[RMDB]
RNA sequence: GGGAACGACUCGAGUAGAGUCGAAAACAUGUGAAGUGCAUGGUAAUGGUAGUAUGAUAGAGGAUAUUGAUUAUGUACCCCUAAAAUCUGCAGUCUGUAUUACAGCUUGUAAUUUAGGGGGCGCUGUGGAGGGUAUGGUUCGCCAUACCCAAAAGAAACAACAACAACAAC
Reactivity to 2A3 in 0.01 (KOAc 150mM, MgCl2 10mM, bicine 150mM(pH8.5), 24C), signal-to-noise 8, nucleotides 027 to 129: c030a020u040g020u040g100a090a040g060u020g040c010a000u030g040g000u110a080a040u080g050g020u020a040g030u030a060u160g110a090u110a050g080a030g050g060a010u030a090u200u150g090a090u110u170a070u260g080u300a300c000c000c000c010u010a010a030a010a070u080c110u030g000c000a000g060u030c020u010g070u050a270u120u300a060c000a010g010c010u030u020g000u020a030a040u020u000u000a000g010g000g000g000g000c040g000c050u110g010u060g100g040a040
Reactivity to DMS in 0.01 (KOAc 150mM, MgCl2 10mM, bicine 150mM(pH8.5), 24C), signal-to-noise 4, nucleotides 027 to 129: c070a080u000g000u000g000a110a080g000u050g030c020a040u010g000g000u020a090a090u010g050g030u020a040g040u000a060u050g000a110u000a010g030a100g000g040a090u010a110u010u020g020a090u000u050a000u000g050u040a080c000c000c000c000u000a020a010a020a020u070c130u020g000c000a040g050u030c030u000g020u020a110u000u000a030c030a020g000c040u050u010g030u020a020a020u030u020u000a040g010g020g010g010g000c080g000c070u060g020u010g000g030a300